[RMDB]
The data come from the RNA Mapping Database (RMDB), library RNAMAK. This 207-nucleotide RNA was probed chemically with 2A3 and DMS. The DMS profile rests on 2,541 reads. Conditions: 150 mM KOAc, 10 mM MgCl2 and 150 mM bicine (pH 8.5), 24 C.
RNA sequence: GGGAACGACUCGAGUAGAGUCGAAAAGGGGUCUCCAUAUUGGGAACCUUGGAUUUAGCUAAGUGCUGUACUGAAGCCUCCACGGUACAGCAACAAGCUUAGCUUGUCAGGUUCCAGGUGGAGACGGAGGCACCCAAAAGGGCGGUUCGCCGCCCAAGUUCACAUAUAGGUUCGCCUAUAUGUGAACAAAAGAAACAACAACAACAAC
Reactivity to 2A3 in 0.01 (KOAc 150mM, MgCl2 10mM, bicine 150mM(pH8.5), 24C), signal-to-noise 4, nucleotides 027 to 156: g020g010g000g000u010c010u010c000c010a020u100a220u120u190g180g010g030a020a020c040c060u100u180g100g000a090u250u270u230a010g000c010u010a010a010g040u080g220c000u000g000u000a000c000u010g040a090a010g000c000c010u000c000c000a030c010g010g000u010a000c010a010g040c000a010a030c060a050a010g040c000u000u010a000g000c000u000u030g060u040c120a100g020g030u000u010c000c010a010g050g000u020g000g010a000g000a000c000g000g000a000g000g010c000a020c000c010c000a030a110a040a050g000g000g010c020g020g000u070u110c230g060c030c010g000c000c000c000a000a000
Reactivity to DMS in 0.01 (KOAc 150mM, MgCl2 10mM, bicine 150mM(pH8.5), 24C), signal-to-noise 1, nucleotides 027 to 156: g030g010g010g000u010c000u010c000c000a060u000a100u020u060g030g040g020a030a000c000c030u040u000g030g000a130u010u010u000a030g000c000u020a020a030g040u020g010c010u000g000u000a020c010u000g000a030a150g020c030c020u000c010c010a300c040g000g010u000a020c010a010g000c040a090a020c190a140a230g010c000u000u000a030g010c000u020u000g010u010c030a100g000g000u000u000c010c020a160g000g050u010g000g020a030g020a010c020g000g030a090g100g070c000a080c010c000c020a070a040a060a230g000g040g000c020g050g000u010u000c170g010c000c030g030c010c010c000a010a170